Conditions: 150 mM KOAc, 10 mM MgCl2 and 150 mM bicine (pH 8.5), 24 C. An RNA of 207 nucleotides, treated with 2A3 and read out base by base.

RNA sequence: GGGAACGACUCGAGUAGAGUCGAAAAGUGAGUGACAGGGGAAAUGGGGAUGGACUGGAAGUGGGCAGCAUGGAGCUGACCUUCAUCAUGGCUUGGCCAACAUAAUGCCUCUUCCCCUUGUCUCUCCAGAAAACGACUUCGUCUUCGGACGAAGUCGCCACUCUGACUGGUUCGCCAGUCAGAGUGGAAAAGAAACAACAACAACAAC
Reactivity to 2A3 in 0.01 (KOAc 150mM, MgCl2 10mM, bicine 150mM(pH8.5), 24C), signal-to-noise 2, nucleotides 027 to 156: g080u050g000a010g010u030g000a010c010a010g000g040g000g030a000a030a160u180g010g010g010g000a030u120g000g120a090c110u080g030g040a110a040g000u040g000g060g030c020a010g000c010a050u150g250g070a050g040c010u040g050a180c000c010u010u040c010a210u010c010a040u140g000g000c060u110u130g150g030c010c010a030a020c070a110u230a130a170u220g080c000c120u080c000u000u040c000c000c010c000u010u070g000u030c000u000c000u000c000c000a040g070a000a150a020a010c030g000a000c000u000u000c000g000u010c000u000u100c300g050g020a000c000g000a030a030g030u000c000g000